This 177-nucleotide RNA was probed chemically with DMS. It was measured as part of the RMDB library OK2TST.
RNA sequence: GGGAACGACUCGAGUAGAGUCGAAAAAGUGGUGCGUGCUUUGGAUCCGCAGGACGCUGAGACGGUGAUCAAUGCGGCCUUGCUGGAUAAGUUGGCGCAGCCGGAGUGGGGGCCGCAUGUGGGCAAAUGGCUUCAAUAACUUCGGUUAUUGAAGCCAAAAAGAAACAACAACAACAAC
Reactivity to DMS in 0.01 (KOAc 150mM, MgCl2 10mM, bicine 150mM(pH8.5), 24C), signal-to-noise 1, nucleotides 027 to 126: a080g050u000g000g030u010g020c040g030u000g010c050u000u000u000g010g030a050u000c040c000g000c030a060g000g020a030c040g000c030u000g000a300g030a010c040g010g030u000g000a120u010c040a000a210u000g010c000g000g000c010c020u000u000g030c020u080g030g000a030u000a000a090g010u020u000g020g000c060g010c060a090g080c020c010g000g000a160g020u000g000g000g000g000g000c060c060g030c110a040u000g000u000g000g000g000c110a050a060a110